[RMDB]
RNA sequence: GGGAACGACUCGAGUAGAGUCGAAAAAGAGUGGUACUCAUACGUGAGUACCACUCAUGUAUGCAGCCACUCCGGGCAGGACGACGCCGGUUUGGUGGCGUGGAGUCCAAUCGGUGCGGCGAGACAAAUGUAACGCGCGGUUCGCCGCGCGUUACAUAAAAGAAACAACAACAACAAC
Reactivity to 2A3 in 0.01 (KOAc 150mM, MgCl2 10mM, bicine 150mM(pH8.5), 24C), signal-to-noise 1, nucleotides 027 to 126: a000g000a000g000u070g000g000u000a000c000u000c000a110u090a050c180g280u090g000a000g000u000a000c000c000a000c000u000c000a000u020g000u000a040u170g120c160a050g000c000c000a000c000u000c000c000g000g000g000c050a170g100g030a000c000g040a000c000g000c000c000g100g010u020u250u280g140g030u110g000g000c000g000u000g010g230a180g000u090c010c000a000a030u070c000g010g000u000g000c000g000g000c010g010a020g030a030c170a080a050

Chemical mapping of a 177-nucleotide RNA with 2A3.